[RMDB]
An RNA of 177 nucleotides, treated with DMS and 2A3 and read out base by base.
The DMS profile rests on 10,418 reads.
The RNA was probed in 150 mM KOAc, 10 mM MgCl2 and 150 mM bicine (pH 8.5) at 24 C.
RNA sequence: GGGAACGACUCGAGUAGAGUCGAAAAGAUAUGGAAUGGCUAGGGCGUUCAUUCGUUGAAAUCGGAAACGAUGGAGAAUGACGUACCAAACCAUUCCUAAGUCAAAACUCAUCCUUCGGGAUGAGAAGAUUAACAAUUGGUUCGCCAAUUGUUAAUCAAAAGAAACAACAACAACAAC
Reactivity to DMS in 0.01 (KOAc 150mM, MgCl2 10mM, bicine 150mM(pH8.5), 24C), signal-to-noise 7, nucleotides 027 to 126: g000a040u000a300u010g010g010a010a010u000g000g020c000u000a300g000g000g010c010g000u020u010c010a000u000u000c000g020u000u010g000a080a100a020u000c000g000g000a110a070a170c010g010a010u000g000g000a080g000a020a000u000g000a020c010g000u000a100c000c010a020a100a130c000c000a010u000u000c000c000u000a020a060g010u010c030a090a060a110a140c000u000c000a000u000c000c000u000u010c180g020g010g010a010u000g000a000g010a050a060
Reactivity to 2A3 in 0.01 (KOAc 150mM, MgCl2 10mM, bicine 150mM(pH8.5), 24C), signal-to-noise 6, nucleotides 027 to 126: g010a010u050a030u120g000g000a010a000u010g010g000c010u030a020g010g000g020c010g060u230u230c040a020u000u000c000g180u240u040g020a020a020a010u010c000g000g030a060a050a040c020g000a010u010g000g000a030g000a010a000u000g000a000c010g010u080a300c000c000a030a010a000c000c000a000u000u000c000c000u000a030a010g010u000c020a030a020a050a130c010u000c000a000u000c010c030u050u070c300g130g000g000a000u010g000a010g000a000a020